[RMDB]
RNA sequence: GGGAACGACUCGAGUAGAGUCGAAAACUUAUGGCGUCUACCAUGCCAAUUCAUGAAGUAGCAGAGUAUUUGCGUCGUCAGGUGAAGAUUUUAGAGGAAUAUGAAUAGUUAUGGCUGGCGGUCGUCCAACCUUAUACAGACCAGAAUAUUGUGAGACCGAGGGAACGAACUUCGGUUCGUUCCCUCGAAAAGAAACAACAACAACAAC
Reactivity to 2A3 in 0.01 (KOAc 150mM, MgCl2 10mM, bicine 150mM(pH8.5), 24C), signal-to-noise 1, nucleotides 027 to 156: c040u100u090a040u240g000g040c000g040u040c010u020a000c000c000a050u110g030c030c090a160a100u190u210c070a050u070g140a140a030g050u120a010g030c130a010g060a010g120u140a240u150u140u050g040c010g050u040c010g040u010c020a050g000g110u010g070a120a000g020a090u070u070u150u150a090g070a040g000g050a010a010u120a120u170g130a120a000u020a070g090u130u110a040u130g010g000c000u000g000g000c000g000g010u010c000g010u020c000c000a010a010c000c010u090u140a070u020a030c050a010g130a050c000c020a000g070a040a180u190a040u040u140g070u080g000a020g050a020c000
Source: RMDB library OK3TST, as collected in RNAgym. This 207-nucleotide RNA was probed chemically with 2A3. The RNA was probed in 150 mM KOAc, 10 mM MgCl2 and 150 mM bicine (pH 8.5) at 24 C. Reactivities are given for positions 27 through 156.